[RMDB]
RNA sequence: GGGAACGACUCGAGUAGAGUCGAAAAGAUAUGGACGUAAGACAUCGACGAUCACCCAUCGUUCGGAAACGAACGAGUGGGUGGGAGAUGCUUACGUCCUAAGUCAAAACAACGCUUCGGCGUUGAAGUUCCUCGAAUGGUUCGCCAUUCGAGGAACAAAAGAAACAACAACAACAAC
Reactivity to DMS in 0.01 (KOAc 150mM, MgCl2 10mM, bicine 150mM(pH8.5), 24C), signal-to-noise 2, nucleotides 027 to 126: g000a010u020a300u010g010g030a030c000g000u000a000a000g000a190c000a000u010c010g000a130c300g020a050u010c010a010c000c010c000a100u000c000g010u000u000c000g030g020a130a100a250c010g010a010a010c000g010a050g060u000g000g000g020u000g020g040g040a050g020a010u000g000c020u000u000a010c000g000u000c000c000u000a000a130g000u030c040a060a040a070a300c000a050a020c000g010c000u000u000c190g020g010c000g040u000u000g000a060a160
Reactivity to 2A3 in 0.01 (KOAc 150mM, MgCl2 10mM, bicine 150mM(pH8.5), 24C), signal-to-noise 2, nucleotides 027 to 126: g030a030u060a050u160g000g000a000c000g020u000a000a000g120a200c010a010u000c020g270a290c040g010a240u070c020a000c000c000c000a010u050c010g010u010u000c000g000g020a080a080a040c030g010a020a000c020g000a030g300u140g000g020g000u000g000g000g000a090g000a010u020g000c020u000u010a030c010g010u000c000c000u010a000a010g020u010c000a000a030a030a070c000a010a000c030g000c020u100u170c300g170g040c000g030u020u020g000a030a010